RNA sequence: GGGAACGACUCGAGUAGAGUCGAAAAGAUAUGGAUCACCAUCGCAUCGAUCUACCGUAACAUCUGAAGGCGCUGUCGGAAACGACAGCGCCUUCAGUGGGUAGGGAGCGACAUUUGAUCCUAAGUCCUUUCUAACCUAGUUCGCUAGGUUAGAAAGAAAAGAAACAACAACAACAAC
Reactivity to DMS in 0.01 (KOAc 150mM, MgCl2 10mM, bicine 150mM(pH8.5), 24C), signal-to-noise 1, nucleotides 027 to 126: g000a130u000a290u010g000g020a010u010c010a060c300c300a300u000c010g030c000a300u030c170g000a080u000c000u010a010c020c000g000u000a080a140c150a030u010c020u010g020a080a000g060g000c000g000c000u000g000u010c000g020g000a020a100a210c010g090a030c000a000g030c020g000c000c000u000u020c000a000g060u010g030g030g030u000a000g000g000g010a000g000c010g010a010c110a240u010u000u000g000a030u000c000c030u010a050a190g000u010c080